[RMDB]
RNA sequence: GGGAACGACUCGAGUAGAGUCGAAAAUGGAGGAUAACUGAUUUAGGGACUUUCUUUAUACCUCUAUAAAAUCGAAGUAAGGCGAUUGAGGGCGAAUGCUAGGGCAGUUAUUAGCAGAUUUACACUACUACUAGCCUGUUUUCGAACAGGCUAGUAGAAAAGAAACAACAACAACAAC
Reactivity to 2A3 in 0.01 (KOAc 150mM, MgCl2 10mM, bicine 150mM(pH8.5), 24C), signal-to-noise 4, nucleotides 027 to 126: u110g020g010a040g000g000a000u010a030a030c040u010g030a090u110u080u150a070g060g010g070a060c000u050u080u040c000u010u060u060a090u090a130c030c000u000c000u000a030u070a100a170a010a070u040c040g020a050a000g090u110a040a020g160g030c020g030a050u010u150g020a070g000g030g000c050g030a040a030u060g010c020u010a010g070g020g000c010a010g020u020u010a030u030u030a040g050c030a000g010a050u050u080u130a040c040a000c030u070a020
Reactivity to DMS in 0.01 (KOAc 150mM, MgCl2 10mM, bicine 150mM(pH8.5), 24C), signal-to-noise 4, nucleotides 027 to 126: u040g020g020a050g010g000a060u020a030a030c080u020g000a010u010u010u020a090g000g010g010a190c120u010u010u020c040u040u010u010a080u040a080c030c020u000c010u010a100u050a060a050a070a050u010c030g000a060a080g010u030a060a080g020g000c030g000a010u000u000g000a040g030g010g020c140g000a050a080u000g000c030u000a030g010g000g010c050a020g020u000u010a020u010u000a070g020c070a080g000a080u030u010u020a100c120a060c080u010a100